[RMDB]
RNA sequence: GGGAACGACUCGAGUAGAGUCGAAAACAUGGUGGCAAGUACGUCGCGAUAUUGCGCCACCUGCAAUAGAAGCGUAGACAUCAACUGUAGCGAGAGCUACUCAACUUAUGGACCUUAGAGCAAGCGAAGACGACUGGUCCUGUCGGAAUUCGCUAGAACCUCGGGAUACUUUCGAGUAUCCCGAGGUAAAAGAAACAACAACAACAAC
Reactivity to 2A3 in 0.01 (KOAc 150mM, MgCl2 10mM, bicine 150mM(pH8.5), 24C), signal-to-noise 1, nucleotides 027 to 156: c080a020u110g000g010u040g000g060c180a190a020g080u050a050c030g060u040c010g060c030g080a110u030a040u040u090g000c040g030c060c000a020c010c000u010g000c020a070a070u090a060g080a130a010g090c010g010u050a020g030a050c010a000u130c110a000a090c110u090g020u010a000g000c000g060a040g010a000g130c000u000a000c030u000c050a050a050c010u040u050a070u180g020g120a020c000c010u060u090a150g000a000g020c140a080a000g010c000g000a000a000g050a040c010g000a000c010u070g020g080u000c000c020u020g000u000c000g000g060a050a090u040u000c020g000c000u000a040g050a150